[RMDB]
RNA sequence: GGGAACGACUCGAGUAGAGUCGAAAAUGUUGCGGCUGCCCGUGGAUCUAGUGGUCACGGAGAAGUUCGCCGCCGACUCGCCGCCCCAGACGGUCGACGUCGGCGCUGUGCCCAAUGGCUUGAUGGGAGGCAUUAAGCAUUUCGAUGCUUAAUGCCUAAAAGAAACAACAACAACAAC
Reactivity to DMS in 0.01 (KOAc 150mM, MgCl2 10mM, bicine 150mM(pH8.5), 24C), signal-to-noise 2, nucleotides 027 to 126: u000g020u000u000g020c010g000g000c000u000g010c150c000c010g020u000g010g020a010u000c010u010a110g050u020g020g010u000c000a020c000g010g000a070g000a120a040g010u010u010c030g030c030c030g000c000c000g010a010c030u000c010g000c010c000g000c100c020c060c110a100g010a210c020g000g000u010c030g010a020c210g000u000c010g000g010c010g000c060u000g000u000g010c020c000c010a090a100u010g010g010c100u000u000g010a110u000g000g000g000
Reactivity to 2A3 in 0.01 (KOAc 150mM, MgCl2 10mM, bicine 150mM(pH8.5), 24C), signal-to-noise 2, nucleotides 027 to 126: u120g030u050u110g030c000g020g000c010u030g070c020c020c080g000u080g150g030a090u080c110u170a210g120u070g300g010u030c000a000c010g010g020a120g020a140a000g020u170u240c020g000c000c030g000c000c000g000a010c000u000c000g000c000c000g050c000c000c000c000a000g060a140c010g030g000u150c110g060a040c080g010u010c000g010g010c000g010c020u070g050u110g080c020c010c000a020a080u150g060g050c070u060u100g030a050u070g050g020g000